Structure probing data (2A3 and DMS) for a 177-nucleotide construct. Reactivities are given for positions 27 through 126. For DMS the reverse transcriptase was MarathonRT.

[RMDB]
RNA sequence: GGGAACGACUCGAGUAGAGUCGAAAAGUGGUGCAUGGCCGUUACGACGAGUGAGGUGACUUUUGGGUUAAAUCCGGGAAGUAGUGAGACCCCUACCGAAAGGGACAGGUGCCGAAAGCACAGGAAGUCCUUUAUAUUAAUUCGUUAAUAUAAAGGAAAAAGAAACAACAACAACAAC
Reactivity to 2A3 in 0.01 (KOAc 150mM, MgCl2 10mM, bicine 150mM(pH8.5), 24C), signal-to-noise 9, nucleotides 027 to 126: g070u050g020g020u030g010c040a040u060g060g000c030c010g040u060u100a050c090g050a010c030g020a050g070u130g020a060g030g050u050g030a040c030u040u070u080u100g070g000g010u060u150a060a080a040u040c010c010g020g020g010a070a020g020u100a020g020u020g060a070g040a080c010c000c000c010u030a060c010c050g070a130a040a020g020g000g000a020c040a040g030g050u030g040c010c000g070a080a020a000g010c020a010c000a030g060g050a040a010g020
Reactivity to DMS in 0.01 (KOAc 150mM, MgCl2 10mM, bicine 150mM(pH8.5), 24C), signal-to-noise 9, nucleotides 027 to 126: g020u010g010g020u000g000c050a070u020g010g010c040c040g010u000u010a070c070g010a090c070g010a110g010u010g010a090g010g010u020g010a070c060u000u010u010u020g010g000g010u010u020a050a100a100u020c040c020g010g000g010a070a090g010u000a040g000u010g000a140g010a120c070c010c020c020u010a100c040c050g010a060a070a080g000g000g000a070c130a090g010g010u000g010c020c020g010a080a080a170g010c020a030c030a090g000g010a090a100g000